[RMDB]
RNA sequence: GGGAACGACUCGAGUAGAGUCGAAAAGAUAUGCUGUUCGCAGCAUAUCAAAAGCGUACUACACUGCUUGCCUCUACCCACCUUAUAUCCCAAAUAGGAUAUAAGAGGAGGACCCAAGCCAGUGUAUCGCAAAGCGUAUAAGAUUCGUCUUAUACGCGCAAAUGACCAGAUUCGUCUGGUCAUUUGCAAAAGAAACAACAACAACAAC
Reactivity to 2A3 in 0.01 (KOAc 150mM, MgCl2 10mM, bicine 150mM(pH8.5), 24C), signal-to-noise 6, nucleotides 027 to 156: g000a000u010a000u000g000c010u010g040u070u110c270g020c150a000g000c000a000u010a000u000c000a010a010a000a080g010c030g020u100a100c070u000a000c030a000c000u010g010c000u010u000g020c010c000u000c020u090a210c070c050c020a060c000c010u000u000a000u000a000u010c020c020c050a170a300a290u260a150g000g000a000u000a000u000a000a000g010a020g000g000a010g000g010a030c120c080c000a010a000g040c070c040a020g000u040g010u010a050u300c000g000c010a070a090a010g020c000g000u000a000u000a000a010g010a020u040u120c190g050u000c140u000u000a000u000a000c000g000c010
Reactivity to DMS in 0.01 (KOAc 150mM, MgCl2 10mM, bicine 150mM(pH8.5), 24C), signal-to-noise 2, nucleotides 027 to 156: g000a010u000a010u020g000c000u050g010u000u000c300g020c030a030g020c000a000u030a000u020c000a010a060a020a110g020c030g050u010a070c060u020a020c020a020c020u000g000c000u000u000g010c060c000u000c020u000a130c020c010c000a220c070c000u000u010a010u000a010u000c010c000c000a080a190a290u000a020g000g010a020u000a010u000a040a020g010a100g020g010a300g000g000a060c020c080c000a020a070g030c060c050a030g030u000g000u000a010u000c030g000c010a110a100a140g010c010g010u000a010u000a000a020g020a050u000u010c300g030u010c000u000u000a000u000a020c000g040c000
This 207-nucleotide RNA was probed chemically with 2A3 and DMS. For 2A3 the reverse transcriptase was SuperScript II with manganese. DMS adducts were read by reverse transcription with MarathonRT.